[RMDB]
RNA sequence: GGGAACGACUCGAGUAGAGUCGAAAAACGGGUCCUGCUUAGGAGAAAAGAAAAACGUCUUACAGCCAGUGUCUAAACUCCAAACAACGGAAUGUAUCAAUGAGACCUUGUAUAUGGAUACACGUGCCAAUAGUAGACCCUUCGGGGUCUACUAUUGAAAAGAAACAACAACAACAAC
Reactivity to 2A3 in 0.01 (KOAc 150mM, MgCl2 10mM, bicine 150mM(pH8.5), 24C), signal-to-noise 2, nucleotides 027 to 126: a000c010g010g050g080u020c020c000u030g040c040u080u110a020g000g060a030g060a030a180a030a030g050a020a150a010a010a010c020g030u010c040u080u110a040c050a020g030c040c000a080g030u060g050u050c030u030a090a040a060c020u040c020c020a090a050a100c060a060a020c010g030g030a140a040u080g060u040a070u100c060a080a090u140g050a050g000a170c000c020u010u040g040u000a100u000a020u200g020g030a010u010a040c000a030c120g010u020g050c040
Reactivity to DMS in 0.01 (KOAc 150mM, MgCl2 10mM, bicine 150mM(pH8.5), 24C), signal-to-noise 2, nucleotides 027 to 126: a090c030g020g030g010u000c010c020u010g020c100u010u000a090g020g030a060g000a050a090a130a080g020a060a040a070a100a070c120g010u000c000u000u000a050c110a050g020c030c040a070g000u000g000u000c050u000a030a080a130c020u010c010c020a090a090a070c100a050a100c120g000g000a050a070u000g020u010a030u000c050a050a050u000g000a100g010a090c050c020u000u010g010u000a080u010a090u030g020g000a060u000a040c020a070c100g000u000g000c240